Chemical mapping of a 177-nucleotide RNA with DMS and 2A3. For 2A3, 1,136 sequencing reads were counted. The reactions ran in a buffer of 150 mM KOAc, 10 mM MgCl2 and 150 mM bicine (pH 8.5), at 24 C. It was measured as part of the RMDB library OK2TRN.

[RMDB]
RNA sequence: GGGAACGACUCGAGUAGAGUCGAAAAGCAUACGCAUAAUACGCUAUAUAAUAUAUGCGCGCGCGAUAAUACGCUAUUAUAUAGCGCGCUAUUAUGCGAUAUAUGCGUAUAUACGCGCGAUAAUAUACGCAAGCUAGGUAUUCGUACCUAGCUUGCGAAAAGAAACAACAACAACAAC
Reactivity to DMS in 0.01 (KOAc 150mM, MgCl2 10mM, bicine 150mM(pH8.5), 24C), signal-to-noise 1, nucleotides 027 to 126: g020c040a030u020a070c060g030c000a030u000a050a040u010a050c030g030c030u000a060u000a030u000a030a060u000a080u000a090u000g010c040g020c020g020c020g050c020g000a070u010a040a090u000a090c090g030c120u000a040u000u000a020u000a010u010a110g010c010g020c300g050c140u000a020u000u000a050u000g000c040g010a090u000a040u000a070u000g000c000g050u020a050u000a060u030a070c060g000c030g020c000g040a090u010a070a080u010a040u020a080
Reactivity to 2A3 in 0.01 (KOAc 150mM, MgCl2 10mM, bicine 150mM(pH8.5), 24C), signal-to-noise 1, nucleotides 027 to 126: g000c000a020u040a000c000g040c010a000u010a000a020u060a070c020g010c010u000a000u000a010u010a150a060u050a040u040a070u220g000c030g000c000g010c000g030c020g020a050u110a220a060u050a110c050g000c070u060a020u220u020a050u030a010u070a040g000c020g000c030g010c000u020a010u070u050a000u040g020c000g000a000u010a000u000a000u060g030c000g010u000a020u000a000u000a010c030g030c000g080c020g050a020u140a300a080u120a030u020a040